[RMDB]
RNA sequence: GGGAACGACUCGAGUAGAGUCGAAAAAAGGAGAUCGCCUACCAGAAGCUGUGCAACAAUCUGGACAUCAUUAGCAGCCACCGGCCAGAUGGCCAGCGCGGCCUCAAUCCGGGCAUUGUGCUGCCCAGACCUGCAUAGCAUUCGUGCUAUGCAGGUCAAAAGAAACAACAACAACAAC
Reactivity to 2A3 in 0.01 (KOAc 150mM, MgCl2 10mM, bicine 150mM(pH8.5), 24C), signal-to-noise 2, nucleotides 027 to 126: a010a010g090g000a040g010a040u080c010g010c020c020u040a070c050c030a020g030a090a010g040c130u150g030u090g090c060a110a040c020a020a190u020c020u060g010g030a000c000a110u090c010a030u130u230a010g020c050a010g000c030c020a020c020c020g040g000c000c000a050g030a160u110g020g030c040c000a100g110c050g010c030g100g000c000c000u010c020a060a060u030c030c040g000g010g000c010a010u050u150g020u040g030c040u000g000c000c010c010a070
Reactivity to DMS in 0.01 (KOAc 150mM, MgCl2 10mM, bicine 150mM(pH8.5), 24C), signal-to-noise 1, nucleotides 027 to 126: a080a080g010g010a060g010a070u030c080g010c000c020u000a120c080c030a170g000a070a040g020c160u010g050u010g000c080a070a080c130a030a070u000c030u020g010g000a140c050a020u010c040a090u020u010a090g010c030a040g010c000c000a070c070c050g000g000c110c040a190g000a030u010g020g020c050c020a070g050c120g010c120g000g000c000c000u000c050a070a140u000c050c000g000g000g010c070a050u010u020g000u000g000c010u000g020c000c090c100a030
Structure probing data (2A3 and DMS) for a 177-nucleotide construct.
2A3 is a SHAPE reagent: it acylates the 2'-hydroxyl of flexible nucleotides of all four kinds.
Reactivities are given for positions 27 through 126.